The record gives the reactivity of an RNA of 177 nucleotides to 2A3 and DMS. It was measured as part of the RMDB library OK2TST. The 2A3 profile rests on 1,242 reads.
RNA sequence: GGGAACGACUCGAGUAGAGUCGAAAACUCACCUCCGCGCUGUCCGAACUCAUUUUACCCAAUGACAACAUAAAGAAUUCAUUUCGAUCGGACGCCUGAAAGUUCGAAUACAUACGAAGUGAACGCAUGACUAAUGAGCAUUCGUGCUCAUUAGUCAAAAAGAAACAACAACAACAAC
Reactivity to 2A3 in 0.01 (KOAc 150mM, MgCl2 10mM, bicine 150mM(pH8.5), 24C), signal-to-noise 2, nucleotides 027 to 126: c020u020c010a070c000c030u060c020c020g000c000g000c010u050g010u000c010c010g060a060a030c000u000c040a020u070u060u110u070a080c000c020c030a040a050u120g040a050c000a080a010c040a140u210a090a210a080g060a090a040u000u010c000a000u000u000u040c000g010a040u000c000g000g000a000c010g010c020c010u200g210a260a060a000g000u010u030c000g010a050a050u120a110c030a150u140a080c020g010a010a010g020u010g030a030a030c040g060c080a080
Reactivity to DMS in 0.01 (KOAc 150mM, MgCl2 10mM, bicine 150mM(pH8.5), 24C), signal-to-noise 2, nucleotides 027 to 126: c020u010c000a170c090c040u000c020c080g020c040g010c070u000g040u000c010c030g010a110a100c100u000c040a050u000u040u000u000a270c030c000c030a080a040u000g010a050c150a050a040c030a050u030a080a110a120g000a160a230u000u000c000a010u000u000u000c000g000a140u000c000g000g000a000c000g010c220c160u010g020a070a020a120g000u000u010c010g010a050a090u020a090c220a170u020a230c020g010a000a000g010u000g010a010a040c190g010c250a060

The RNA was probed in 150 mM KOAc, 10 mM MgCl2 and 150 mM bicine (pH 8.5) at 24 C.